[RMDB]
RNA sequence: GGGAACGACUCGAGUAGAGUCGAAAAGCAACCACCUUCGGGUGGUUGCAAAUGACGAUGCACGAUGACGAAGACGAACAUGCUGAAGACGACGACGAACAAAAAGACCCACGUUCGCGUGGGUCAAUCACUACUCCUAGUUCGCUAGGAGUAGUGAAAAAGAAACAACAACAACAAC
Reactivity to DMS in 0.01 (KOAc 150mM, MgCl2 10mM, bicine 150mM(pH8.5), 24C), signal-to-noise 4, nucleotides 027 to 126: g010c010a010a010c020c000a010c000c000u000u000c180g030g020g060u000g000g000u000u030g010c010a020a040a050u010g020a090c060g010a100u000g000c010a070c050g010a070u000g000a070c050g020a040a060g010a060c050g010a070a080c090a050u010g000c030u010g010a080a090g000a060c030g020a060c040g020a050c070g000a070a060c130a040a080a070a100a150g010a010c000c000c000a010c000g020u000u000c170g020c010g060u000g000g010g010u000c000a010a030
Reactivity to 2A3 in 0.01 (KOAc 150mM, MgCl2 10mM, bicine 150mM(pH8.5), 24C), signal-to-noise 3, nucleotides 027 to 126: g000c000a000a000c010c010a000c010c000u030u090c180g130g000g000u000g000g030u000u000g010c000a010a010a000u050g010a010c030g020a020u060g030c020a010c040g040a050u070g020a000c030g030a060a020g060a020c020g020a060a010c020a060u110g020c030u060g060a070a030g050a020c050g020a010c040g010a010c010g050a130a030c060a060a090a020a020a010g000a000c000c000c000a010c020g020u030u040c210g000c010g080u010g010g020g000u000c000a000a010